[RMDB]
RNA sequence: GGGAACGACUCGAGUAGAGUCGAAAAGAAAUUACGUUUCCUUUACACUUCUCAAACGGGGAUCAAGAGAAGCAAAGCAUCCCUCAUAUCCACGAUGGAGGGUGUCGUGGAGUAUACUGUACCAAAAAGAGCGAACACGGCUUCGGCCGUGUUCGAAGAUAAGUCCAUAGUUCGCUAUGGACUUAUCAAAAGAAACAACAACAACAAC
Reactivity to 2A3 in 0.01 (KOAc 150mM, MgCl2 10mM, bicine 150mM(pH8.5), 24C), signal-to-noise 5, nucleotides 027 to 156: g030a010a060a020u170u110a040c060g020u010u030u030c010c000u030u050u070a050c060a040c030u060u040c010u000c030a140a120a050c080g000g020g010g000a020u040c060a210a070g020a010g020a040a020g050c100a050a020a010g020c010a050u040c020c030c000u050c030a080u080a040u100c020c010a010c020g010a010u030g070g050a050g030g040g030u050g000u000c010g000u000g000g000a010g020u000a020u020a060c090u080g080u110a090c010c070a060a090a010a050a050g110a040g060c000g000a000a000c000a000c000g010g010c040u060u080c190g050g000c010c000g020u000g000u000u000c000g010a000a000
Reactivity to DMS in 0.01 (KOAc 150mM, MgCl2 10mM, bicine 150mM(pH8.5), 24C), signal-to-noise 2, nucleotides 027 to 156: g010a100a070a120u000u010a080c090g010u000u010u010c000c000u000u020u010a130c090a050c010u000u000c000u000c000a050a120a160c050g010g030g080g010a130u010c070a130a200g010a050g000a020a040g000c020a080a100a120g020c030a110u000c000c000c000u040c050a090u000a100u000c040c030a050c000g000a090u010g010g000a040g000g010g020u000g030u000c020g010u020g000g010a100g000u000a100u010a060c050u000g010u010a130c050c000a060a090a050a070a070g020a160g000c000g030a020a030c010a010c000g000g000c000u000u000c300g070g040c000c020g000u000g020u000u000c000g000a000a040